[RMDB]
RNA sequence: GGGAACGACUCGAGUAGAGUCGAAAAAAACCGCUAAAGUGAGUGGCGCACCAUAGAAGCCUGGAUUUUGCCCCAAGGUAUGGCUGCCUGGUAUCUACGAAGAACUGUAGAAAAACAUGGAUGAUACGUUUUAUGUACGCUUCGGCGUACAUAAAACAAAAGAAACAACAACAACAAC
Reactivity to DMS in 0.01 (KOAc 150mM, MgCl2 10mM, bicine 150mM(pH8.5), 24C), signal-to-noise 1, nucleotides 027 to 126: a010a030a010c030c000g000c040u010a030a100a190g000u010g000a170g000u030g000g000c020g000c060a120c000c000a060u000a070g000a080a180g020c070c030u000g010g010a190u000u000u070u000g000c070c000c050c050a140a040g020g030u050a020u010g000g010c120u000g020c050c020u000g010g040u000a050u030c000u000a030c020g010a070a200g000a100a100c070u020g000u000a010g000a000a040a070a060a030c050a070u000g000g000a040u000g000a110u020a010c160
Reactivity to 2A3 in 0.01 (KOAc 150mM, MgCl2 10mM, bicine 150mM(pH8.5), 24C), signal-to-noise 2, nucleotides 027 to 126: a010a000a000c080c000g000c110u110a120a090a000g090u120g130a030g060u090g000g000c000g000c030a040c000c010a020u020a210g030a080a000g060c020c040u040g020g080a040u000u020u030u200g070c000c000c020c050a020a050g010g000u140a040u110g000g000c040u050g000c020c040u030g000g000u040a050u000c000u010a030c030g010a040a110g050a200a190c120u150g030u040a010g000a010a050a000a000a010c020a080u040g020g070a090u100g020a040u070a060c030